[RMDB]
RNA sequence: GGGAACGACUCGAGUAGAGUCGAAAACGACAAGGGUGUAAAGAUCGCUCUUUUACUCGGCAUGAUACCACCGUUAUCGGGUCAACAGGGUAGUUGCAAAUGACAACAAUGCUCAGGGUUAUGCUCUAAAAGUUCGUACCCUUCGGGGUACGAACAAUCUAGAAUAUAAGUUCGCUUAUAUUCUAGAAAAAGAAACAACAACAACAAC
Reactivity to 2A3 in 0.01 (KOAc 150mM, MgCl2 10mM, bicine 150mM(pH8.5), 24C), signal-to-noise 6, nucleotides 027 to 156: c070g080a010c050a060a030g040g060g030u050g040u200a140a140a050g100a120u200c030g010c030u030c000u000u060u030u060a100c060u040c020g010g000c030a010u090g010a010u040a060c000c010a010c000c010g060u070u070a050u120c040g000g000g020u020c020a020a030c020a060g020g000g050u050a090g030u060u030g010c030a070a190a220u180g070a110c010a030a010c010a050a100u090g020c000u030c040a010g080g000g000u100u070a050u120g020c010u010c010u080a060a110a020a020g000u000u000c000g000u000a000c000c010c000u010u020c070g050g000g000g000u000a000c000g000a000a000c000a000a000
Reactivity to DMS in 0.01 (KOAc 150mM, MgCl2 10mM, bicine 150mM(pH8.5), 24C), signal-to-noise 3, nucleotides 027 to 156: c050g030a090c140a050a050g000g010g040u000g000u000a100a060a130g000a110u000c070g000c060u000c020u000u000u000u000a060c030u000c000g000g000c010a100u000g010a150u000a050c020c010a130c030c020g010u000u010a040u000c070g000g000g000u000c030a110a120c070a100g020g000g020u010a060g030u000u000g030c030a060a110a190u000g010a080c030a040a050c020a050a100u000g000c030u000c030a100g000g010g000u000u010a070u000g000c020u000c030u010a070a060a110a130g000u010u000c000g010u000a020c000c000c000u010u000c300g000g040g020g030u000a000c000g000a000a010c010a030a030
Structure probing data (2A3 and DMS) for a 207-nucleotide construct. Conditions: 150 mM KOAc, 10 mM MgCl2 and 150 mM bicine (pH 8.5), 24 C. 2A3 adducts were read by reverse transcription with SuperScript II with manganese. Values cover nucleotides 27 to 156. For 2A3, 6,481 sequencing reads were counted. For DMS, 7,896 sequencing reads were counted.